[RMDB]
RNA sequence: GGGAACGACUCGAGUAGAGUCGAAAAGAUAUGGACCCGUAGCUAGUCUGUCGGAAACGACAAGGACUUGGACCUACAGGGUCCUAAGUCAAAGAUAAGACAAUCGGUUCGCCGAUUGUCUUAUCAACGGUACUACUCACUUCGGUGAGUAGUACCGAAAAGAAACAACAACAACAAC
Reactivity to DMS in 0.01 (KOAc 150mM, MgCl2 10mM, bicine 150mM(pH8.5), 24C), signal-to-noise 2, nucleotides 027 to 126: g000a090u000a300u000g000g000a010c000c010c000g000u000a010g000c030u000a040g010u000c000u000g040u000c000g000g030a100a130a180c030g010a000c010a120a050g020g030a020c000u010u000g050g000a130c300c010u010a030c040a170g030g000g010u000c000c000u000a000a090g000u000c040a140a140a240g000a060u000a000a000g000a000c000a000a000u000c010g000g030u000u010c170g000c000c010g010a000u000u010g000u000c000u000u000a000u000c010a040a120
Reactivity to 2A3 in 0.01 (KOAc 150mM, MgCl2 10mM, bicine 150mM(pH8.5), 24C), signal-to-noise 1, nucleotides 027 to 126: g030a020u110a030u110g000g020a000c020c000c030g000u000a010g020c020u000a000g010u020c030u060g030u020c020g060g030a110a050a060c030g030a020c040a040a120g230g030a010c020u060u140g110g100a100c030c020u060a090c220a300g010g020g010u020c000c000u030a040a040g000u000c080a000a050a190g010a000u000a010a000g010a000c000a000a000u000c010g010g000u070u150c300g000c140c010g000a000u000u030g000u010c000u000u000a000u000c000a000a000

The record gives the reactivity of an RNA of 177 nucleotides to DMS and 2A3. For DMS the reverse transcriptase was MarathonRT. 2A3 adducts were read by reverse transcription with SuperScript II with manganese. The DMS profile rests on 1,234 reads. The reactions ran in a buffer of 150 mM KOAc, 10 mM MgCl2 and 150 mM bicine (pH 8.5), at 24 C. The data come from the RNA Mapping Database (RMDB), library TTRDEL.